Chemical mapping of a 207-nucleotide RNA with 2A3 and DMS. Source: RMDB library M2RFOK, as collected in RNAgym. DMS (dimethyl sulfate) methylates the pairing face of unpaired adenines and cytosines. The DMS profile rests on 5,075 reads. For 2A3 the reverse transcriptase was SuperScript II with manganese. The 2A3 profile rests on 9,785 reads.

RNA sequence: GGGAACGACUCGAGUAGAGUCGAAAAAACGUUGCAUGAUCGUAAAACAUGCCCGGCUUACCGUGAGCCGCCUUAGAAAGAAAGGUUUACACGGACUCUGUUGCGUUACGCACGUACCUAACUUGUGAAAACGGCAUCUUGUUCGCAAGAUGCCGAACAGUUCAUAACAGUUCGCUGUUAUGAACUGAAAAGAAACAACAACAACAAC
Reactivity to 2A3 in 0.01 (KOAc 150mM, MgCl2 10mM, bicine 150mM(pH8.5), 24C), signal-to-noise 8, nucleotides 027 to 156: a010a000c000g000u000u000g000c000a000u000g010a070u180c050g060u210a110a130a010a010c000a000u000g000c000c000c010g000g000c000u020u060a100c010c010g000u010g000a000g000c000c010g050c020c010u120u040a130g130a080a090a010g040a020a030a000g040g000u020u050u080a030c000a000c000g060g030a100c040u070c050u150g100u110u040g020c020g030u040u060a070c160g020c010a010c010g020u040a040c000c030u060a100a160c060u130u110g040u050g150a030a060a030a040c020g000g000c000a000u000c000u000u010g020u040u030c060g000c090a000a000g000a000u000g000c000c000g000a000a000
Reactivity to DMS in 0.01 (KOAc 150mM, MgCl2 10mM, bicine 150mM(pH8.5), 24C), signal-to-noise 3, nucleotides 027 to 156: a070a080c010g010u000u000g010c030a020u010g000a060u010c010g040u000a040a060a060a100c010a010u000g000c010c100c030g010g010c010u000u010a110c030c060g000u000g000a060g040c000c010g030c030c040u000u000a160g010a160a110a190g000a130a090a060g010g030u000u020u000a140c050a060c020g050g000a190c180u000c070u000g030u000u000g000c000g000u000u000a090c060g020c050a070c080g020u020a040c030c020u010a090a070c090u010u010g050u000g000a110a040a090a130c000g050g020c010a000u000c010u000u000g020u000u010c270g020c030a020a030g030a050u000g000c000c000g010a010a030